[RMDB]
RNA sequence: GGGAACGACUCGAGUAGAGUCGAAAACAGACAAGCCGGUGUGGAAGCGCAUCAUCGGCGCGCUGCUCGUGCUGGUUGCGGUGCUCAGCAUGACGCAGAGCACCAUUUUCACGGCCCGUCAGUCGGCGUGUAACGACGAGUUCCGACGGGUGAUCAAAUUAAAUGACUCGUUCGCGAGUCAUUUAAUAAAAGAAACAACAACAACAAC
Reactivity to 2A3 in 0.01 (KOAc 150mM, MgCl2 10mM, bicine 150mM(pH8.5), 24C), signal-to-noise 3, nucleotides 027 to 156: c020a010g190a050c000a080a020g040c010c000g010g020u050g010u070g010g050a120a050g090c070g000c060a070u090c010a060u120c140g080g010c020g030c000g020c000u070g020c030u030c020g060u030g040c050u020g040g140u140u140g000c110g000g050u020g000c000u010c000a040g000c040a100u190g120a100c200g000c000a000g000a000g000c000a010c000c000a000u060u070u070u060c080a050c000g090g000c000c000c000g000u000c000a020g030u020c000g020g060c040g020u150g100u150a170a110c020g000a000c010g000a020g060u120u080c030c020g030a020c010g000g000g000u030g020a100u150c020a040a130
Reactivity to DMS in 0.01 (KOAc 150mM, MgCl2 10mM, bicine 150mM(pH8.5), 24C), signal-to-noise 1, nucleotides 027 to 156: c030a160g020a120c030a050a080g020c010c010g020g010u000g020u000g010g000a150a160g050c030g000c040a170u010c080a070u000c040g000g040c040g000c030g000c000u010g000c020u000c050g030u010g020c000u010g020g000u000u000g020c100g030g000u000g000c000u000c010a060g080c010a200u010g010a180c240g020c010a070g000a020g030c010a020c020c000a090u000u000u000u000c060a100c010g000g010c000c000c000g020u000c010a170g000u000c000g010g010c010g010u020g010u010a090a140c090g020a020c010g000a030g020u010u010c030c040g010a000c020g010g050g040u000g000a070u030c060a060a100

The data come from the RNA Mapping Database (RMDB), library OK3TST.
An RNA of 207 nucleotides, treated with 2A3 and DMS and read out base by base.
2A3 adducts were read by reverse transcription with SuperScript II with manganese.
For DMS, 3,457 sequencing reads were counted.
The RNA was probed in 150 mM KOAc, 10 mM MgCl2 and 150 mM bicine (pH 8.5) at 24 C.